[RMDB]
RNA sequence: GGGAACGACUCGAGUAGAGUCGAAAACAAAUAUUUGAAGGCCACAAACACAUUUCCUCCUUCCACUCACUCCACAAGGCUCUUUUCUUCCAGCUCAGCAUGCCCAGUGGUUUUGAACAGGGAGGCACGUACCUCGAAGAUUCGUCUUCGAGGUACGAAAAGAAACAACAACAACAAC
Reactivity to DMS in 0.01 (KOAc 150mM, MgCl2 10mM, bicine 150mM(pH8.5), 24C), signal-to-noise 1, nucleotides 027 to 126: c050a080a040a080u000a080u000u040u030g000a080a080g000g040c070c010a020c090a080a020a020c210a090c170a060u000u000u000c000c020u000c040c040u020u000c040c070a130c030u000c040a000c070u000c000c040a010c100a100a080g000g000c100u000c050u060u000u000u000c030u000u000c050c100a050g000c020u020c090a000g000c100a070u010g040c000c000c080a080g020u030g000g010u000u040u010u010g000a080a070c100a070g000g000g000a030g000g000c180a070
Reactivity to 2A3 in 0.01 (KOAc 150mM, MgCl2 10mM, bicine 150mM(pH8.5), 24C), signal-to-noise 4, nucleotides 027 to 126: c000a000a040a060u170a110u120u120u210g100a080a020g040g010c030c020a030c040a030a160a000c040a020c020a130u050u060u020c000c010u000c000c000u030u020c020c000a010c030u010c000a030c000u000c000c020a020c020a050a040g030g000c010u040c020u080u080u060u030c040u090u030c030c010a030g000c020u020c050a030g040c030a060u130g000c000c010c000a010g020u050g030g000u020u030u020u080g030a020a000c010a030g030g000g000a030g030g000c000a010
The record gives the reactivity of an RNA of 177 nucleotides to DMS and 2A3. For DMS, 1,598 sequencing reads were counted. The data come from the RNA Mapping Database (RMDB), libraries RFM100 and RFMREP.